Source information: Source: RMDB library 15KLIB, as collected in RNAgym. Chemical mapping of a 170-nucleotide RNA with DMS and 2A3. The reactions ran in a buffer of 150 mM KOAc, 10 mM MgCl2 and 150 mM bicine (pH 8.5), at 24 C. For 2A3, 5,347 sequencing reads were counted. For 2A3 the reverse transcriptase was SuperScript II with manganese. The DMS profile rests on 9,365 reads. DMS adducts were read by reverse transcription with MarathonRT.

RNA sequence: GGGAACGACUCGAGUAGAGUCGAAAAUCCUCGCUGGCGCCGGCUGGGCAACAUUCCGAGGGGACCGUCCCUCGGUAAUGGCGAAUGGGACCCAGAACUCUCUCUAGAUUCCCAGAGAGAAUCGAGAUACGUCAGCCGUUCGCGGCUGACAAAAGAAACAACAACAACAAC
Reactivity to DMS in 0.01 (KOAc 150mM, MgCl2 10mM, bicine 150mM(pH8.5), 24C), signal-to-noise 4, nucleotides 027 to 129: u000c040c020u000c130g040c050u040g000g030c090g010c260c060g000g000c050u050g010g020g070c060a070a110c050a020u000u050c000c000g050a040g060g040g030g000a130c270c260g050u090c000c030c000u000c010g000g000u050a000a000u030g020g040c140g030a110a090u050g000g000g000a080c000c030c020a090g010a160a140c080u000c010u030c010u020c020u000a060g010a180u000u050c110c000c020a070g010a010g010a030g020a000a050u020c100g040a140g010a220u050a090c000
Reactivity to 2A3 in 0.01 (KOAc 150mM, MgCl2 10mM, bicine 150mM(pH8.5), 24C), signal-to-noise 3, nucleotides 027 to 129: u000c000c000u020c010g000c060u050g080g000c050g020c040c000g050g050c000u010g000g070g010c010a030a010c050a020u000u000c000c010g000a010g010g000g000g030a160c000c020g240u190c040c010c050u030c020g000g010u000a010a010u020g000g000c030g030a050a080u160g000g000g030a010c000c000c000a000g020a020a050c050u000c020u000c000u030c000u000a110g050a230u050u070c000c000c040a000g000a000g000a000g000a030a030u080c100g030a010g000a090u150a110c100